[RMDB]
RNA sequence: GGGAACGACUCGAGUAGAGUCGAAAAGGUAUCGAUCUCACGGCGAUGAUGGCGCAGGGCAUUACGAUGGGCGAUGAGUUCCAUCAACGCAAUAUUGCUUCCUCUGCACUGUUAAUGCGUGCGCUGACGCUAGGCGUGAUUUCGAUCACGCCUAGCGAAAAGAAACAACAACAACAAC
Reactivity to 2A3 in 0.01 (KOAc 150mM, MgCl2 10mM, bicine 150mM(pH8.5), 24C), signal-to-noise 1, nucleotides 027 to 126: g100g010u110a100u130c020g000a030u020c030u040c080a060c000g040g040c000g040a030u090g030a030u130g050g000c000g030c020a020g030g090g000c000a010u000u050a050c070g000a010u010g000g050g030c080g120a130u280g030a070g030u140u160c050c000a010u000c000a010a000c020g000c000a050a030u100a190u300u120g040c010u120u070c040c070u020c060u010g050c020a030c060u030g030u100u030a060a030u070g040c060g000u030g000c030g000c030u020g010a050
Reactivity to DMS in 0.01 (KOAc 150mM, MgCl2 10mM, bicine 150mM(pH8.5), 24C), signal-to-noise 2, nucleotides 027 to 126: g000g030u000a090u000c060g000a060u000c010u020c040a110c050g000g010c030g000a120u010g000a110u030g000g000c080g030c020a010g040g010g020c060a040u010u000a040c300g020a020u000g000g020g000c020g000a140u000g000a280g040u000u000c000c030a010u010c000a090a010c210g000c070a040a130u010a080u000u010g010c120u000u000c150c030u010c130u000g040c050a110c150u000g000u000u010a000a010u020g000c030g060u000g000c030g010c060u000g020a120

Background:
Chemical mapping of a 177-nucleotide RNA with 2A3 and DMS. Values cover nucleotides 27 to 126. The reactions ran in a buffer of 150 mM KOAc, 10 mM MgCl2 and 150 mM bicine (pH 8.5), at 24 C. For DMS, 1,200 sequencing reads were counted. DMS (dimethyl sulfate) methylates the pairing face of unpaired adenines and cytosines. Source: RMDB library OK2TST, as collected in RNAgym.